About this RNA
Conditions: 150 mM KOAc, 10 mM MgCl2 and 150 mM bicine (pH 8.5), 24 C. Structure probing data (DMS and 2A3) for a 207-nucleotide construct. For DMS the reverse transcriptase was MarathonRT.
RNA sequence: GGGAACGACUCGAGUAGAGUCGAAAAGUUCAAUUUGUGUAUACUUUCCUAACAAAUUAGUACUGUAAUUAGCAUCUGGAGUCGUAUCAGUCAUAGCGCGAGCACGAUCGCCUGCAAAGCCUAGUUUCACUACUUUAUCCAGUUCAUCUUGAGACAAACCACUAAUGAUGUUCGCAUCAUUAGUGGUAAAAGAAACAACAACAACAAC
Reactivity to DMS in 0.01 (KOAc 150mM, MgCl2 10mM, bicine 150mM(pH8.5), 24C), signal-to-noise 2, nucleotides 027 to 156: g010u000u000c050a020a090u000u000u010g030u000g020u010a160u000a070c130u010u000u000c050c010u000a130a130c040a070a030a100u000u000a090g030u000a050c060u020g000u010a050a090u000u010a070g010c030a060u000c040u020g020g010a100g020u020c070g000u010a060u000c040a100g030u010c070a130u010a040g030c060g000c030g010a070g010c070a100c060g020a110u010c060g000c030c000u000g000c040a050a050a130g020c020c010u000a070g020u000u000u000c070a110c040u000a040c020u010u000u000a130u020c040c010a070g030u010u000c060a070u000c060u020u000g010a100g010a090c030a060a100
Reactivity to 2A3 in 0.01 (KOAc 150mM, MgCl2 10mM, bicine 150mM(pH8.5), 24C), signal-to-noise 6, nucleotides 027 to 156: g030u040u040c050a050a050u070u090u090g080u020g120u040a060u050a240c070u070u130u090c020c020u010a080a030c030a020a030a040u090u030a040g020u030a030c020u040g030u090a070a100u080u070a080g020c040a060u040c060u080g050g020a020g030u030c010g030u080a030u120c050a010g090u040c040a070u090a070g040c020g000c020g060a010g010c040a010c080g040a080u060c030g030c040c000u040g000c050a090a040a040g010c010c020u020a030g020u020u050u020c020a030c050u070a020c000u090u090u030a070u020c020c020a030g010u080u110c040a090u060c070u050u130g030a060g060a050c090a050a090